[RMDB]
RNA sequence: GGGAACGACUCGAGUAGAGUCGAAAAGAUAUGGAGGAUGAAGUCGCAUCGAUCGACCGGUCGGAAACGACCGUGUCGGGAGCGACCAUCCUCCUAAGUCAAACCCAGGUAGUUCGCUACCUGGGAAUCUCAUACAAGUGUUCGCACUUGUAUGAGAAAAAGAAACAACAACAACAAC
Reactivity to 2A3 in 0.01 (KOAc 150mM, MgCl2 10mM, bicine 150mM(pH8.5), 24C), signal-to-noise 4, nucleotides 027 to 126: g000a000u010a010u050g000g000a000g010g000a000u020g060a300a230g100u010c010g000c010a190u300c110g030a030u000c010g000a010c010c000g000g000u000c000g000g000a000a010a000c000g000a000c020c000g020u040g000u020c010g000g000g010a040g000c000g000a000c000c000a000u000c000c000u000c000c000u000a000a000g000u000c010a000a030a080c010c000c000a000g010g010u000a020g010u040u100c300g010c200u000a000c000c000u000g000g000g010a010a080
Reactivity to DMS in 0.01 (KOAc 150mM, MgCl2 10mM, bicine 150mM(pH8.5), 24C), signal-to-noise 4, nucleotides 027 to 126: g000a020u010a040u010g000g000a030g010g000a000u000g000a160a200g020u000c000g010c010a300u000c240g010a010u030c000g000a010c000c000g010g010u000c000g020g000a010a010a040c010g010a010c000c000g020u020g010u000c000g000g010g010a020g040c000g010a010c010c000a000u000c010c000u000c000c000u000a000a050g010u000c010a140a130a230c000c000c000a020g000g010u000a000g010u010u010c260g010c000u000a010c000c000u000g000g000g000a020a010